[RMDB]
RNA sequence: GGGAACGACUCGAGUAGAGUCGAAAAUUGGAAUAAUUUCACACAUCGUAACAUACUAUUCAGGAAAAAAAGAACCUUUUGGAUAUAUAGGGAUAGUAUGAGCAAUAAUAUCUAUUGGGUUCUUAGGAAAGCGAUAUAUUUUCGAAUAUAUCGCUUUAAAAGAAACAACAACAACAAC
Reactivity to DMS in 0.01 (KOAc 150mM, MgCl2 10mM, bicine 150mM(pH8.5), 24C), signal-to-noise 5, nucleotides 027 to 126: u010u010g020g010a130a130u010a070a080u000u000u000c060a100c110a120c140a080u010c090g010u010a090a270c020a020u000a020c030u000a030u010u000c020a190g020g020a010a010a060a090a070a050a050g000a020a020c000c010u000u000u000u000g010g010a040u000a040u010a090u000a140g010g010g000a020u000a020g010u000a020u010g010a150g020c090a050a060u010a080a050u000a020u000c010u000a040u000u010g010g000g010u000u000c010u000u010a100g020g000
Reactivity to 2A3 in 0.01 (KOAc 150mM, MgCl2 10mM, bicine 150mM(pH8.5), 24C), signal-to-noise 2, nucleotides 027 to 126: u060u050g050g040a100a050u200a160a120u090u110u080c010a010c040a000c010a150u120c020g100u070a160a020c000a020u080a030c010u050a040u050u020c020a060g110g070a080a130a060a010a000a000a080g030a020a020c000c000u030u090u110u040g020g020a030u030a000u040a020u170a290g100g000g030a020u030a020g010u030a050u080g030a020g040c020a000a080u180a160a040u030a020u040c020u040a100u060u020g000g010g000u010u000c010u000u000a010g050g050